RNA sequence: GGGAACGACUCGAGUAGAGUCGAAAAAGUGAGUAUGGCUCGUUACGACGAGCCAUACUCACAACGGUUUUCCUAAAUCGUCGUGAGACGGACCUUGGAAAACCUAGUAUUUAAAUUACUAGGUCAAAUUAGCCUAGAUCCUUCGGGAUCUAGGCAACUAUCAUCUCCCGUUCGCGGGAGAUGAUAGAAAAGAAACAACAACAACAAC
Reactivity to 2A3 in 0.01 (KOAc 150mM, MgCl2 10mM, bicine 150mM(pH8.5), 24C), signal-to-noise 1, nucleotides 027 to 156: a000g010u000g000a010g000u000a010u000g000g040c010u010c030g030u040u070a090c250g010a000c000g010a040g000c000c000a000u000a000c010u010c000a000c000a000a000c000g010g010u000u000u030u000c000c000u000a000a000a000u080c000g030u000c010g010u020g110a150g020a040c000g000g010a010c030c040u020u050g000g000a020a020a000a000c030c000u000a010g020u000a080u050u090u120a120a170a110u080u070a090c090u100a010g000g010u000c010a000a040a170u140u150a020g000c000c000u000a000g000a000u000c000c000u010u100c270g070g000g000a000u000c000u000a020g000g000c000a000a000